Overview: Chemical mapping of a 177-nucleotide RNA with DMS. The DMS profile rests on 643 reads. Values cover nucleotides 27 to 126.

RNA sequence: GGGAACGACUCGAGUAGAGUCGAAAAUCGAGUGCAAAGAGGAAUUUCUGUGGAAAACAGCUGGCAGAUUGUUAGAAGAUACAGUGACUUUGAUUUGCUUAACAACAGCUUACAGAUUGCAGGCCUAGGGGAUGUGAGAAUUCGUUCUCACAUCCCCAAAAGAAACAACAACAACAAC
Reactivity to DMS in 0.01 (KOAc 150mM, MgCl2 10mM, bicine 150mM(pH8.5), 24C), signal-to-noise 1, nucleotides 027 to 126: u010c070g000a110g040u000g000c010a060a090a020g010a180g000g000a140a090u020u000u000c010u000g030u000g030g000a090a050a090a140c190a050g040c110u000g020g030c020a010g030a190u000u000g010u010u000a030g000a070a070g000a120u000a070c060a030g000u010g000a060c070u020u010u020g000a110u010u010u010g000c030u000u010a070a050c160a040a080c120a040g010c050u000u000a050c070a040g000a040u010u000g000c040a050g020g000c010c090u000a110
It was measured as part of the RMDB library OK2TRN. Conditions: 150 mM KOAc, 10 mM MgCl2 and 150 mM bicine (pH 8.5), 24 C.